[RMDB]
RNA sequence: GGGAACGACUCGAGUAGAGUCGAAAAUAGAUCGAGAAAUGGACGUCCGAGAUUCGUCCACGUCACCAUGAGUUAAAAUUUAACUCGCAGAUUCACUCCUGAGUUAAACUUUUACUGGGAGUUAAAUAACCCUAACCGAUUUCGAUCGGUUAGGGUUAAAAGAAACAACAACAACAAC
Reactivity to DMS in 0.01 (KOAc 150mM, MgCl2 10mM, bicine 150mM(pH8.5), 24C), signal-to-noise 1, nucleotides 027 to 126: u040a110g000a110u000c050g000a090g000a160a160a120u000g010g000a000c020g000u080c230c150g020a230g020a060u050u090c000g000u020c000c020a000c010g000u000c180a130c040c030a110u020g000a030g000u000u000a120a080a090a300u000u040u000a000a000c000u000c000g000c160a100g120a140u000u040c090a000c000u000c000c010u010g000a020g020u000u000a000a030a180c270u070u000u000u050a120c030u000g000g000g000a050g000u000u000a000a000a180u000
Reactivity to 2A3 in 0.01 (KOAc 150mM, MgCl2 10mM, bicine 150mM(pH8.5), 24C), signal-to-noise 2, nucleotides 027 to 126: u140a010g040a030u150c120g000a000g210a100a020a180u040g000g000a010c010g000u070c080c120g140a010g000a250u050u150c010g000u020c050c000a000c000g130u070c000a080c070c030a010u150g020a010g210u000u040a020a000a230a300u120u020u000a000a000c000u000c000g070c000a040g050a160u060u060c000a000c000u020c000c020u010g050a020g060u070u030a070a090a180c160u120u240u050u070a000c000u000g020g020g020a000g000u000u090a020a020a020u020